[RMDB]
RNA sequence: GGGAACGACUCGAGUAGAGUCGAAAAAACAAAACUAAGGGCAUAGACAAUAACUACCGAUGUCAUAUACCCAUACUCUCUAAUCUUGGCCAGUCGGCGCGUUCUGCUUCCGAUUAGAAACGUCAAGUACGUUGAGUGAUUUCGAUCACUCAACGUAAAAAGAAACAACAACAACAAC
Reactivity to 2A3 in 0.01 (KOAc 150mM, MgCl2 10mM, bicine 150mM(pH8.5), 24C), signal-to-noise 2, nucleotides 027 to 126: a000a010c050a030a050a000a000c060u140a050a100g000g030g040c030a050u030a020g000a010c000a040a130u110a150a060c110u100a120c040c050g100a030u030g000u040c030a060u010a010u020a110c000c000c020a020u100a050c040u060c000u000c030u080a020a060u090c000u010u030g020g030c000c000a010g020u010c000g000g000c000g000c010g140u300u140c090u210g020c000u230u050c000c000g010a000u000u070a050g110a150a090a000c060g020u000c000a000a020g040
Reactivity to DMS in 0.01 (KOAc 150mM, MgCl2 10mM, bicine 150mM(pH8.5), 24C), signal-to-noise 2, nucleotides 027 to 126: a060a060c140a130a060a060a140c200u010a100a120g030g000g010c070a030u000a050g010a030c000a070a060u040a110a140c160u010a130c140c050g010a040u010g030u000c000a060u010a060u020a060c000c000c000a190u010a090c140u010c080u000c100u010a060a010u010c000u000u000g010g000c020c050a050g000u000c030g000g040c300g010c030g000u000u000c020u000g010c010u000u030c000c010g010a030u000u000a030g000a100a060a050c170g000u000c060a040a010g020